[RMDB]
RNA sequence: GGGAACGACUCGAGUAGAGUCGAAAAUUAAAGCACAUGAAGCACGCGAAGCACGGCAAGCAGUACAAGCACUACAAGCAGUUCAAGCAGCGCAAGCAGUAGAAGCAGCCGAAGCACAUGAAAAAAAUCAUUAUGUCUCCUUCGGGAGACAUAAUGAAAAAGAAACAACAACAACAAC
Reactivity to DMS in 0.01 (KOAc 150mM, MgCl2 10mM, bicine 150mM(pH8.5), 24C), signal-to-noise 1, nucleotides 027 to 126: u000u010a020a080a150g000c050a000c100a120u000g030a090a100g000c080a060c040g000c070g000a090a070g020c090a060c100g000g010c060a070a050g020c140a050g040u010a030c070a070a060g020c020a070c070u000a060c110a070a090g020c090a010g010u000u000c040a020a120g000c040a090g000c080g000c110a020a040g000c040a080g010u000a030g000a060a170g000c050a030g030c060c020g000a030a060g030c050a090c100a040u000g040a000a000a000a070a050a120a030